This 177-nucleotide RNA was probed chemically with DMS and 2A3. For 2A3, 18,719 sequencing reads were counted. The reactions ran in a buffer of 150 mM KOAc, 10 mM MgCl2 and 150 mM bicine (pH 8.5), at 24 C. 2A3 adducts were read by reverse transcription with SuperScript II with manganese. For DMS the reverse transcriptase was MarathonRT. Values cover nucleotides 27 to 126.
RNA sequence: GGGAACGACUCGAGUAGAGUCGAAAAGAAGGGAAAGGAGACCCAUGGACAGUCUCCAGAGGUUCCUAAGGCCUCGAUCGCGCCUGCAGGGAGGCAGAAUGUCCCGGUUGUCCAUGCAAGAAGAAGACACCUAAUAUAUAUUCGUAUAUAUUAGGUGAAAAGAAACAACAACAACAAC
Reactivity to DMS in 0.01 (KOAc 150mM, MgCl2 10mM, bicine 150mM(pH8.5), 24C), signal-to-noise 9, nucleotides 027 to 126: g010a120a100g010g000g010a040a090a120g000g000a020g010a030c020c080c060a060u010g000g000a020c040a130g000u000c020u000c010c010a060g010a090g010g010u010u010c030c100u020a100a140g010g000c000c000u000c020g000a090u030c100g000c110g010c050c030u020g010c080a080g010g000g010a040g010g020c010a100g010a100a080u020g000u010c000c000c010g010g010u020u010g000u000c010c010a020u010g010c280a090a080g010a100a080g010a120a070g010a230
Reactivity to 2A3 in 0.01 (KOAc 150mM, MgCl2 10mM, bicine 150mM(pH8.5), 24C), signal-to-noise 9, nucleotides 027 to 126: g080a050a070g070g020g040a080a050a060g020g010a010g000a000c000c030c050a020u030g010g000a010c010a010g010u010c000u010c000c020a010g000a010g030g060u080u100c020c020u060a060a060g070g000c010c000u020c030g030a090u090c040g000c030g010c070c040u060g020c030a050g040g040g030a020g030g000c010a010g100a120a070u120g040u050c000c000c000g030g000u060u030g010u000c010c010a010u030g040c050a070a120g070a100a020g050a030a010g070a150